About this RNA:
Chemical mapping of a 177-nucleotide RNA with DMS and 2A3. The 2A3 profile rests on 2,480 reads. It was measured as part of the RMDB library M2PK50. For DMS, 2,140 sequencing reads were counted.
RNA sequence: GGGAACGACUCGAGUAGAGUCGAAAACCCAUUAACUUCGGUUAAUGGGAAAACUAUGGAAACGGGCUACCAUAGAACGUCGAAAUAGAUGAAAUGCCGGUAAAACCGCUGCCUUCGGGCAGCGGAACACACAUAACAUCUUCGGAUGUUAUGUGUGAAAAGAAACAACAACAACAAC
Reactivity to DMS in 0.01 (KOAc 150mM, MgCl2 10mM, bicine 150mM(pH8.5), 24C), signal-to-noise 3, nucleotides 027 to 126: c010c000c000a020u000u000a010a000c000u000u020c170g050g010u000u000a000a010u000g010g000g010a060a040a040a080c000u010a010u000g000g010a100a120a040c030g010g000g000c010u000a130c120c120a050u000a000g000a010a090c070g010u000c030g000a170a120a040u010a060g010a100u020g010a070a110a060u000g000c010c030g000g020u000a060a030a180a140c000c000g000c000u000g000c000c000u000u010c180g010g000g030c010a010g030c000g010g010a010a060
Reactivity to 2A3 in 0.01 (KOAc 150mM, MgCl2 10mM, bicine 150mM(pH8.5), 24C), signal-to-noise 2, nucleotides 027 to 126: c000c000c000a000u010u000a010a010c020u050u070c230g060g000u010u020a000a000u000g010g000g000a010a020a040a020c000u000a000u020g000g020a080a100a090c070g050g030g000c010u060a070c030c010a040u040a080g040a060a010c040g020u030c020g090a060a090a130u100a130g100a070u040g080a030a100a080u110g060c000c070g040g020u080a060a070a010a050c000c010g000c000u000g000c010c000u000u060c170g100g030g060c000a000g000c000g000g000a000a000